RNA sequence: GGGAACGACUCGAGUAGAGUCGAAAACGACCUCCUGACGGGUCGGACAUAGCGUCAGGAUCAUCCGUGACAGUCACCACGGUAAUCAUGUGCCUGAUGAUGGUUUUCCAUCUUAAUCUGACUGAGUCGUAGCAGUCUACAGUACUAUGACAUUAGACGGAGUGACUAAUUUCGAUUAGUCACUCCGAAAAGAAACAACAACAACAAC
Reactivity to DMS in 0.01 (KOAc 150mM, MgCl2 10mM, bicine 150mM(pH8.5), 24C), signal-to-noise 1, nucleotides 027 to 156: c020g020a250c000c000u000c040c030u000g010a100c030g010g040g050u000c010g000g000a150c070a030u000a100g000c050g000u000c010a030g000g000a100u020c000a050u020c000c000g020u010g000a080c050a250g000u010c010a300c080c000a010c000g010g000u000a020a040u000c090a150u000g000u000g040c020c000u000g010a100u020g000a070u000g000g010u000u000u000u000c010c030a090u000c030u010u000a090a200u000c050u000g010a180c090u010g000a100g040u000c010g020u000a040g040c000a050g000u010c030u010a130c140a230g030u000a010c010u000a010u010g010a030c000a200u000u000a060g020a300
Reactivity to 2A3 in 0.01 (KOAc 150mM, MgCl2 10mM, bicine 150mM(pH8.5), 24C), signal-to-noise 5, nucleotides 027 to 156: c010g010a010c000c010u030c010c020u020g010a000c010g000g000g000u020c050g070g040a050c070a080u160a020g100c000g000u000c010a000g000g000a010u100c030a020u040c010c010g000u010g020a050c000a010g010u010c000a010c020c000a010c010g010g090u100a050a060u090c090a070u070g000u020g010c010c010u010g020a020u030g000a010u000g030g070u110u150u250u050c010c000a000u020c000u020u090a130a120u100c080u120g000a000c000u000g000a000g000u010c020g000u010a000g000c010a020g020u010c150u100a090c070a070g030u050a060c000u000a010u030g000a000c010a050u080u130a050g040a050